[RMDB]
RNA sequence: GGGAACGACUCGAGUAGAGUCGAAAACAUCAUACAAUUGCAACGCACUCCGCUGCCUGUCAAGUACUGGCGGUGGAGAGUAGGCUGAUUUGUAAUUUCAAAUAUUGGGAAAGAUAAAUCCUUUGUAUGUAUGGACUGCUUUCGAGCAGUCCAUACAAAAAGAAACAACAACAACAAC
Reactivity to DMS in 0.01 (KOAc 150mM, MgCl2 10mM, bicine 150mM(pH8.5), 24C), signal-to-noise 1, nucleotides 027 to 126: c070a110u190c150a100u010a000c030a060a010u000u030g030c120a020a150c150g000c020a150c000u000c000c020g000c000u060g000c000c000u020g000u020c050a110a020g030u000a020c020u040g000g050c000g000g000u000g040g000a000g030a020g010u000a150g040g000c090u130g010a100u000u020u040g000u000a020a170u000u010u050c080a090a110a170u030a110u010u020g050g000g000a000a070a130g000a100u010a000a070a140u000c000c040u000u020u000g000u000a010
Reactivity to 2A3 in 0.01 (KOAc 150mM, MgCl2 10mM, bicine 150mM(pH8.5), 24C), signal-to-noise 3, nucleotides 027 to 126: c010a070u160c000a010u020a100c020a020a040u000u020g020c020a010a020c040g000c010a000c010u000c000c000g000c000u000g000c000c000u040g020u010c050a180a020g040u070a140c000u030g000g000c000g000g000u000g000g000a000g010a000g000u040a040g000g100c080u070g010a060u080u000u010g000u030a030a020u000u040u250c130a050a100a040u160a150u220u090g080g010g050a090a120a080g060a050u230a080a090a070u060c040c050u070u120u060g130u100a020